This 177-nucleotide RNA was probed chemically with DMS and 2A3. It was measured as part of the RMDB library M2PK50. The 2A3 profile rests on 1,556 reads. 2A3 adducts were read by reverse transcription with SuperScript II with manganese. Values cover nucleotides 27 to 126.

RNA sequence: GGGAACGACUCGAGUAGAGUCGAAAACGUAGAUACUUCGGUAUCUACGAAAAUAAGGCUGGCGUGGGACACAGCCGGAGCUAGCCUCGGAUAGUCUCAGUAAAACAGCAUGGUUCGCCAUGCUGAAGCAAGUUCUAGAGUUCGCUCUAGAACUUGCAAAAGAAACAACAACAACAAC
Reactivity to DMS in 0.01 (KOAc 150mM, MgCl2 10mM, bicine 150mM(pH8.5), 24C), signal-to-noise 1, nucleotides 027 to 126: c020g020u000a010g040a010u000a000c000u000u020c170g080g000u010a010u010c000u030a000c000g000a010a080a040a060u000a090a120g000g020c010u000g000g000c040g000u020g040g010g020a090c150a040c190a100g000c040c010g030g010a240g020c050u000a050g010c000c020u000c040g030g000a120u000a070g010u000c000u000c000a170g010u020a090a120a070a130c020a020g000c000a000u000g000g010u000u010c160g020c010c000a010u000g000c010u000g010a030a050
Reactivity to 2A3 in 0.01 (KOAc 150mM, MgCl2 10mM, bicine 150mM(pH8.5), 24C), signal-to-noise 1, nucleotides 027 to 126: c000g000u000a000g010a020u000a000c000u030u070c220g010g000u010a000u000c000u020a000c000g000a010a000a000a000u080a020a020g010g000c010u000g000g020c020g090u180g010g050g030a040c030a010c000a200g110c000c010g000g000a010g020c070u060a010g010c010c020u010c010g110g010a070u070a140g040u000c000u000c040a060g080u140a010a090a040a040c000a000g000c000a000u010g010g020u070u070c240g000c080c000a000u000g000c020u000g000a000a000